[RMDB]
RNA sequence: GGGAACGACUCGAGUAGAGUCGAAAAGAUAUGGACGUGUCGACUCGCAACAGCAAUAAUCGGAAACGAUUAUUGACAUGCGAAGUCGCACGUCCUAAGUCAAAACCCAACGCUUCGGCGUUGGGAACCUUUACAUCUACUUCGGUAGAUGUAAAGGAAAAGAAACAACAACAACAAC
Reactivity to 2A3 in 0.01 (KOAc 150mM, MgCl2 10mM, bicine 150mM(pH8.5), 24C), signal-to-noise 6, nucleotides 027 to 126: g030a010u080a050u180g000g020a010c010g020u020g070u300c080g010a000c000u000c000g000c010a050a150c040a300g100c000a010a000u010a010a000u000c010g040g050a070a060a050c020g000a000u000u010a010u010u010g040a060c010a020u070g000c010g100a140a090g000u010c000g010c000a000c000g000u010c000c000u010a000a000g010u000c010a030a050a070a120c010c000c000a000a000c010g020c020u070u140c300g240g000c000g000u000u010g000g000g000a010a010
Reactivity to DMS in 0.01 (KOAc 150mM, MgCl2 10mM, bicine 150mM(pH8.5), 24C), signal-to-noise 5, nucleotides 027 to 126: g010a030u000a300u010g010g010a020c000g020u010g000u010c010g020a010c010u000c000g010c010a020a090c300a240g000c000a010a000u000a010a000u000c000g010g000a130a090a280c000g010a020u000u000a000u000u000g000a050c070a210u000g000c010g010a050a040g000u000c000g010c000a010c000g020u000c000c000u000a000a070g010u000c030a110a070a140a150c010c010c000a000a000c010g030c000u000u010c300g020g010c000g010u000u000g000g020g010a020a010